[RMDB]
An RNA of 177 nucleotides, treated with 2A3 and DMS and read out base by base.
Reactivities are given for positions 27 through 126.
RNA sequence: GGGAACGACUCGAGUAGAGUCGAAAAACACUAGUGUACGCACUAGUGAUAGUCCAAAAGGUCUUUCCUGUUUGCUAUGGCCUUGAGGAAUGUGGCCCUAGAUCCAGCGUCAUCUACGGAUGACGCAGGUUUGAACGUAUUUCGAUACGUUCAAACCAAAAGAAACAACAACAACAAC
Reactivity to 2A3 in 0.01 (KOAc 150mM, MgCl2 10mM, bicine 150mM(pH8.5), 24C), signal-to-noise 9, nucleotides 027 to 126: a000c000a000c000u000a010g000u010g020u060a040c260g020c090a000c000u000a000g000u000g000a040u070a020g070u000c000c000a010a040a010a030g020g000u000c020u030u080u130c040c060u150g160u230u250u130g070c090u120a090u210g010g000c010c000u010u030g010a060g030g080a030a040u170g060u100g080g020c000c000c000u060a100g020a160u050c070c090a020g000c010g000u000c000a010u000c000u020a040c270g100g000a000u000g000a000c000g000c000a010
Reactivity to DMS in 0.01 (KOAc 150mM, MgCl2 10mM, bicine 150mM(pH8.5), 24C), signal-to-noise 4, nucleotides 027 to 126: a160c000a010c000u000a010g010u010g010u020a110c260g040c010a010c000u000a000g000u000g000a040u020a030g020u000c000c000a050a140a050a010g000g010u000c000u000u000u020c050c070u030g010u000u040u000g020c090u000a070u010g000g010c000c010u000u000g010a300g010g020a040a010u000g030u010g000g010c020c010c020u020a080g020a050u030c110c060a090g010c000g010u010c000a000u010c000u010a100c220g040g000a020u000g000a000c000g000c000a010

For 2A3 the reverse transcriptase was SuperScript II with manganese. The RNA was probed in 150 mM KOAc, 10 mM MgCl2 and 150 mM bicine (pH 8.5) at 24 C.